[RMDB]
RNA sequence: GGGAACGACUCGAGUAGAGUCGAAAACGCCACUUACGCCAUAAACACAUUCUUCGUGCCCCGCCUCCUGCAAGCUGGGCAUGCAGGCAUUAAGCGCUGGACUCGCAAAGUGGACUUGUUCAGCAAGGCAAAGCAGGUUAUUCGUAACCUGCUUUGCAAAAGAAACAACAACAACAAC
Reactivity to DMS in 0.01 (KOAc 150mM, MgCl2 10mM, bicine 150mM(pH8.5), 24C), signal-to-noise 1, nucleotides 027 to 126: c190g000c000c010a000c030u000u000a040c210g010c040c020a110u000a130a150a190c150a050c210a110u040u000c020u000u000c050g000u000g010c020c000c000c030g000c010c050u000c000c080u000g080c110a070a110g010c000u000g010g000g030c050a000u000g000c110a040g010g000c300a150u000u010a070a060g010c150g040c000u000g040g010a010c050u000c070g020c040a130a030a100g000u010g000g000a230c040u000u000g000u000u000c050a110g020c100a190a090g020
Reactivity to 2A3 in 0.01 (KOAc 150mM, MgCl2 10mM, bicine 150mM(pH8.5), 24C), signal-to-noise 1, nucleotides 027 to 126: c000g000c010c010a030c070u050u110a080c060g110c050c030a140u150a130a250a030c060a040c020a200u150u130c040u010u020c000g020u010g000c000c000c010c030g000c000c010u120c020c030u090g070c030a070a000g030c010u020g010g040g010c010a000u010g000c000a000g000g070c000a080u150u180a150a030g050c040g020c040u000g020g010a010c020u000c020g030c000a080a020a060g050u090g000g000a040c020u020u010g010u040u020c000a020g030c030a030a050g110

This 177-nucleotide RNA was probed chemically with DMS and 2A3. The data come from the RNA Mapping Database (RMDB), library OK2TRN.